This 177-nucleotide RNA was probed chemically with 2A3.
The RNA was probed in 150 mM KOAc, 10 mM MgCl2 and 150 mM bicine (pH 8.5) at 24 C.
[RMDB]
RNA sequence: GGGAACGACUCGAGUAGAGUCGAAAAGCACUCGAACAACUCGCUGACGUCGACUGUCUCGUCUGUCGACAGCCGCCGGAGGACGCCACUCUCGAGGAGACGAUCGACCGCGUUCGACGCCGGCGCGGGCGCCCUGCAUGUUCGCAUGCAGGGCGCCAAAAGAAACAACAACAACAAC
Reactivity to 2A3 in 0.01 (KOAc 150mM, MgCl2 10mM, bicine 150mM(pH8.5), 24C), signal-to-noise 2, nucleotides 027 to 126: g060c030a070c100u060c070g010a160a060c030a100a030c090u040c130g060c070u020g020a020c040g030u000c000g010a020c000u060g090u110c010u020c080g230u110c070u110g040u020c000g000a020c000a000g020c000c000g010c000c000g000g000a000g040g070a030c000g050c010c000a060c020u060c040u000c030g150a190g060g030a060g090a000c060g050a060u050c090g050a070c070c050g010c020g030u060u100c030g010a030c030g000c020c010g000g000c000g010c000g000